Chemical mapping of a 177-nucleotide RNA with 2A3 and DMS. The reactions ran in a buffer of 150 mM KOAc, 10 mM MgCl2 and 150 mM bicine (pH 8.5), at 24 C. For DMS the reverse transcriptase was MarathonRT. Source: RMDB library OK1LIB, as collected in RNAgym.
RNA sequence: GGGAACGACUCGAGUAGAGUCGAAAACACCAGGACCAUAGAGCAUAGUCUUGGGAUCUGGUAUUGUUAAGAGAAACUGCCCAAUGCAGCUUCGUCUUGCUGUGCAACAAUAUUAGGGCAUGUAGCAACACACUAUGUCCUUCGGGACAUAGUGUGUAAAAGAAACAACAACAACAAC
Reactivity to 2A3 in 0.01 (KOAc 150mM, MgCl2 10mM, bicine 150mM(pH8.5), 24C), signal-to-noise 2, nucleotides 027 to 126: c040a000c030c020a000g000g010a000c000c000a010u060a120g040a000g100c040a040u060a020g040u000c000u070u060g000g000g010a030u000c000u000g030g000u000a000u000u060g120u070u120a140a020g050a010g000a150a120a000c020u000g020c020c000c000a010a000u160g000c000a030g000c000u070u120c010g130u060c140u080u080g000c010u020g010u070g100c090a060a120c000a040a030u160a150u260u200a060g020g000g020c040a010u210g040u000a140g050c060a010
Reactivity to DMS in 0.01 (KOAc 150mM, MgCl2 10mM, bicine 150mM(pH8.5), 24C), signal-to-noise 3, nucleotides 027 to 126: c100a180c000c000a010g000g000a000c000c020a030u010a090g000a100g060c230a150u020a100g000u010c020u000u000g000g000g000a090u000c000u000g000g000u010a030u030u010g000u020u000a070a060g000a130g000a040a040a060c010u010g010c010c100c140a070a060u020g000c010a010g000c010u000u000c170g000u030c040u000u020g000c010u000g000u010g000c150a110a090c150a000a040u010a040u030u010a100g010g000g020c090a030u020g010u010a060g000c130a070